[RMDB]
RNA sequence: GGGAACGACUCGAGUAGAGUCGAAAAGACGCCUGUGUGGCGAAGCGAGCAUGAGAUGGAGCCGCAAGAGAAGAUGAGAUAGAAGCGGCGUGAUAGAUUGCUCGCAAAAAGAUCCAUCUCACAGAGACAGCCAGUAGGUAUUCGUACCUACUGGCUGAAAAGAAACAACAACAACAAC
Reactivity to 2A3 in 0.01 (KOAc 150mM, MgCl2 10mM, bicine 150mM(pH8.5), 24C), signal-to-noise 2, nucleotides 027 to 126: g070a010c010g080c010c000u120g030u040g070u130g110g000c020g000a030a000g000c000g000a000g010c040a090u090g000a030g000a090u050g050g130a020g000c010c000g000c100a060a040g100a000g060a240a050g060a190u300g040a030g000a050u090a070g140a190a080g020c000g000g000c000g000u080g040a030u040a050g070a030u020u010g000c000u000c000g000c000a000a000a000a110a000g030a040u000c000c000a020u010c030u000c000a070c010a000g090a000g080a100
Reactivity to DMS in 0.01 (KOAc 150mM, MgCl2 10mM, bicine 150mM(pH8.5), 24C), signal-to-noise 2, nucleotides 027 to 126: g010a200c050g000c000c020u020g030u030g020u020g000g000c010g000a090a080g000c010g000a020g030c010a040u050g000a220g010a050u000g020g040a300g000c000c000g020c010a120a110g000a300g020a070a100g000a170u050g020a080g000a200u020a120g010a180a070g010c000g000g000c000g020u010g000a100u030a090g000a160u020u000g010c030u010c040g020c000a020a000a000a020a030g000a120u000c040c010a020u000c030u000c030a120c170a100g000a140g010a170
Structure probing data (2A3 and DMS) for a 177-nucleotide construct. The data come from the RNA Mapping Database (RMDB), library OK1LIB. The reactions ran in a buffer of 150 mM KOAc, 10 mM MgCl2 and 150 mM bicine (pH 8.5), at 24 C. 2A3 adducts were read by reverse transcription with SuperScript II with manganese.